RNA sequence: GGGAACGACUCGAGUAGAGUCGAAAAGACCCGACUGCGUCAAGGUUGGGGCGCCUGGCCGGUAUGUGCUGCACGAGCGGGUGCGCGCUGACCAUCCGGCUGCUCGGGCGCACUGAGAUCAGGCGGCCACCGAUCGGGUGUUCGCACCCGAUCGGUGAAAAGAAACAACAACAACAAC
Reactivity to 2A3 in 0.01 (KOAc 150mM, MgCl2 10mM, bicine 150mM(pH8.5), 24C), signal-to-noise 2, nucleotides 027 to 126: g040a020c000c010c010g000a020c000u090g020c050g110u070c110a070a090g040g020u010u050g030g020g000g000c000g000c020c010u000g000g010c020c010g000g040u250a090u120g060u030g000c070u170g020c010a010c030g020a050g060c040g010g070g010u050g050c100g000c060g030c170u100g040a200c010c010a020u000c000c010g000g060c060u100g000c020u020c020g020g000g000c000g010c000a000c010u010g030a040g000a120u020c010a010g020g000c000g030g030c000
Reactivity to DMS in 0.01 (KOAc 150mM, MgCl2 10mM, bicine 150mM(pH8.5), 24C), signal-to-noise 2, nucleotides 027 to 126: g010a160c010c000c010g020a070c040u010g020c140g000u000c160a080a120g000g000u000u000g040g000g000g000c020g010c000c020u000g010g020c060c000g000g020u020a040u000g000u000g000c000u010g060c010a040c010g010a020g020c020g010g000g010u000g010c120g010c180g020c100u000g000a090c070c030a060u010c030c010g010g000c110u010g000c050u000c020g000g000g000c010g010c010a010c010u010g010a140g000a040u000c020a020g010g010c020g020g010c090
Conditions: 150 mM KOAc, 10 mM MgCl2 and 150 mM bicine (pH 8.5), 24 C. Structure probing data (2A3 and DMS) for a 177-nucleotide construct. For DMS, 2,701 sequencing reads were counted. 2A3 adducts were read by reverse transcription with SuperScript II with manganese. For DMS the reverse transcriptase was MarathonRT. The 2A3 profile rests on 1,798 reads.